[RMDB]
RNA sequence: GGGAACGACUCGAGUAGAGUCGAAAAGGUGCUGGCAGACCACAAGGGACCCGACGUCGUCCGCCGGGUUCGGCAGGCUUGGGACACGUUGACAUCACGACGUUGACUCUGCGCCCACCACGUGUCCAACCGUUAAACCCUUCGGGGUUUAACGGUUAAAAGAAACAACAACAACAAC
Reactivity to 2A3 in 0.01 (KOAc 150mM, MgCl2 10mM, bicine 150mM(pH8.5), 24C), signal-to-noise 1, nucleotides 027 to 126: g110g010u080g040c040u060g060g000c030a010g020a090c040c010a060c080a130a180g090g010g000a000c010c030c000g000a020c030g020u140c060g040u070c120c020g000c010c010g030g020g000u090u070c040g000g000c120a070g000g050c050u160u140g040g020g000a020c020a000c060g010u010u040g020a050c000a090u130c050a040c060g100a000c030g060u050u050g020a050c040u040c020u090g010c000g070c000c000c030a000c030c000a040c050g050u040g000u000c020c020
Reactivity to DMS in 0.01 (KOAc 150mM, MgCl2 10mM, bicine 150mM(pH8.5), 24C), signal-to-noise 2, nucleotides 027 to 126: g040g020u000g000c090u010g000g000c030a130g000a120c080c070a140c120a120a160g000g000g000a020c020c040c000g000a010c000g010u000c160g000u000c160c010g020c000c010g020g010g030u010u020c010g010g000c120a090g020g000c110u010u020g020g000g020a020c010a060c010g000u000u030g010a100c210a090u000c160a080c100g000a030c040g000u020u030g020a060c080u010c040u000g000c030g000c010c010c010a140c070c040a070c020g000u000g000u000c000c020